[RMDB]
Notes:
The record gives the reactivity of an RNA of 177 nucleotides to 2A3 and DMS.
RNA sequence: GGGAACGACUCGAGUAGAGUCGAAAAUCUGCCAAGAUGGAAGGCCUACUAGCUCAUGGGUAGUUAUCCACCAAGUAGAUCUUCGAUCUAAGAUUGACCUAUUAUAUUUGAGCUGGAGUAUUUACCAACACUGCACGUAUUUCGAUACGUGCAGUGUAAAAGAAACAACAACAACAAC
Reactivity to 2A3 in 0.01 (KOAc 150mM, MgCl2 10mM, bicine 150mM(pH8.5), 24C), signal-to-noise 2, nucleotides 027 to 126: u000c000u010g100c000c040a060a020g020a020u050g070g020a020a020g000g010c000c000u000a010c010u000a010g040c040u080c180a080u060g010g000g000u070a120g170u150u250a030u030c000c010a020c020c020a100a040g000u000a020g030a030u000c010u040u020c060g080a020u000c010u030a050a020g010a040u020u060g030a020c000c020u030a120u160u160a220u090a110u070u140u140g080a030g000c020u030g000g000a020g000u050a100u060u090u080a030c010c000a040
Reactivity to DMS in 0.01 (KOAc 150mM, MgCl2 10mM, bicine 150mM(pH8.5), 24C), signal-to-noise 3, nucleotides 027 to 126: u000c010u010g030c150c230a070a050g020a010u000g000g010a090a040g010g020c070c000u000a010c020u000a080g020c180u000c180a130u000g000g000g000u000a120g000u010u010a030u010c010c030a030c210c070a060a070g010u010a000g010a010u000c000u000u000c040g000a030u010c010u000a120a040g000a010u000u000g000a090c060c020u000a110u010u010a140u010a130u000u000u000g000a090g000c050u000g000g000a100g000u010a050u000u000u000a100c080c030a080
Annotation: 2A3 is a SHAPE reagent: it acylates the 2'-hydroxyl of flexible nucleotides of all four kinds. Values are in units of 0.01, from 0 to 300, in steps of 10.